The record gives the reactivity of an RNA of 177 nucleotides to DMS and 2A3. 2A3 adducts were read by reverse transcription with SuperScript II with manganese. Reactivities are given for positions 27 through 126. It was measured as part of the RMDB library OK1LIB.
[RMDB]
RNA sequence: GGGAACGACUCGAGUAGAGUCGAAAAUGGUGUUAAGUGGAAUAAGUGGAAAAAUAUACAUAUAUGUACAGGGGGCUACAUAUAUGUAUAUGCCCCCUCAAUUCAGUAUAAGUAGGUAUAAGGUGGACCAUAUACCAUACUUCGGUAUGGUAUAUGGAAAAGAAACAACAACAACAAC
Reactivity to DMS in 0.01 (KOAc 150mM, MgCl2 10mM, bicine 150mM(pH8.5), 24C), signal-to-noise 4, nucleotides 027 to 126: u010g020g010u010g000u010u020a050a060g010u000g020g020a070a030u020a070a100g000u010g020g010a020a070a060a080a030u000a020u000a010c000a020u000a020u000a020u000g000u000a030c100a130g020g020g010g010g010c130u000a010c020a030u010a050u020a020u020g000u000a000u010a020u000g000c090c010c020c010c010u010c050a030a030u010u000c050a090g000u020a040u020a030a100g030u010a020g000g020u000a050u000a070a070g000g030u020g010g010a280
Reactivity to 2A3 in 0.01 (KOAc 150mM, MgCl2 10mM, bicine 150mM(pH8.5), 24C), signal-to-noise 5, nucleotides 027 to 126: u120g030g010u090g020u120u090a130a100g060u080g070g050a080a060u080a160a040g030u140g040g050a060a050a020a080a010u070a000u000a020c010a000u040a000u010a010u030g000u010a010c110a120g000g050g000g020g030c020u020a000c010a000u060a000u000a020u060g000u000a010u000a000u020g000c000c000c000c000c000u000c000a020a040u060u040c010a000g040u030a070u020a180a060g050u090a010g020g110u070a090u040a110a040g030g040u050g030g030a000